[RMDB]
RNA sequence: GGGAACGACUCGAGUAGAGUCGAAAAAAUGAUACCUUACGAGGUAUCAGAAUGACUUCGUGGUAGAGCGCCACGAACGGAAAAUAAAGAAAGCUCGAUUGAAACGCACCGUGUACGCACGGUGCGAAAAAGUCGAUCCAGUUCGCUGGAUCGACAAUCAACAUAAUACCUUCGGGUAUUAUGUUGAAAAAGAAACAACAACAACAAC
Reactivity to DMS in 0.01 (KOAc 150mM, MgCl2 10mM, bicine 150mM(pH8.5), 24C), signal-to-noise 1, nucleotides 027 to 156: a140a120u000g000a010u000a010c000c000u000u010a130c180g000a100g020g000u010a000u000c000a050g020a080a110u020g010a210c040u000u000c000g050u000g000g000u020a010g010a080g010c000g040c000c030a000c000g000a020a030c120g010g000a120a090a070a090u000a020a040a070g000a060a080a080g000c000u000c020g000a200u010u020g000a130a090a220c020g020c010a010c000c000g150u010g070u020a140c300g020c040a020c010g000g090u000g020c000g000a000a010a030a060a030g020u000c000g010a010u000c000c020a000g020u010u000c270g000c030u000g000g000a080u000c020g000a010c010a040a030
Reactivity to 2A3 in 0.01 (KOAc 150mM, MgCl2 10mM, bicine 150mM(pH8.5), 24C), signal-to-noise 2, nucleotides 027 to 156: a000a040u040g000a000u000a000c000c000u060u070a070c280g080a010g000g000u010a000u000c000a000g020a050a130u210g020a060c030u000u000c000g010u000g000g010u030a150g010a000g000c000g000c000c000a000c000g000a000a010c030g020g030a050a000a030a020u050a030a030a010g120a010a030a020g000c030u020c030g150a150u060u210g090a140a060a020c010g000c000a000c000c030g000u000g050u120a040c160g000c130a000c000g000g000u000g010c010g000a000a000a050a010a000g010u000c000g000a000u010c000c000a010g010u050u050c140g080c150u000g000g000a000u020c020g000a000c000a000a010